Structure probing data (DMS and 2A3) for a 177-nucleotide construct.
2A3 adducts were read by reverse transcription with SuperScript II with manganese.
It was measured as part of the RMDB library OK1LIB.
RNA sequence: GGGAACGACUCGAGUAGAGUCGAAAACACGGUGAGUGUUGAGAGCAACUGACGGUGCUUGCUGGUUAAUCUGACGCUUGCUGGAUAGGCUGAACGGCGACACAAUAAACGAGGUAAGCAGCCGAUGACUUAGGUCCCCUUUCGAGGGGACCUAAGUAAAAGAAACAACAACAACAAC
Reactivity to DMS in 0.01 (KOAc 150mM, MgCl2 10mM, bicine 150mM(pH8.5), 24C), signal-to-noise 2, nucleotides 027 to 126: c060a040c070g010g040u060g010a060g060u000g000u010u000g020a030g000a100g000c170a070a030c060u000g020a200c060g000g020u010g010c030u000u020g010c000u000g040g000u010u000a080a110u020c210u000g000a030c080g010c000u000u010g000c010u000g010g040a100u050a020g000g050c000u010g040a150a120c110g000g000c020g000a100c010a090c200a110a070u050a030a040a120c000g000a130g000g000u010a070a050g010c040a000g000c000c000g000a080u040g000
Reactivity to 2A3 in 0.01 (KOAc 150mM, MgCl2 10mM, bicine 150mM(pH8.5), 24C), signal-to-noise 3, nucleotides 027 to 126: c100a000c000g070g000u100g110a090g000u070g050u050u130g120a070g000a010g030c040a030a040c080u050g060a020c090g030g010u090g030c060u060u090g040c020u010g080g000u160u070a110a060u020c040u010g000a000c030g000c040u020u090g010c000u030g000g050a100u120a070g030g000c000u010g080a120a040c000g050g000c000g030a010c040a000c020a100a030u180a090a030a060c100g050a070g010g110u060a010a010g040c000a010g050c000c090g040a090u090g000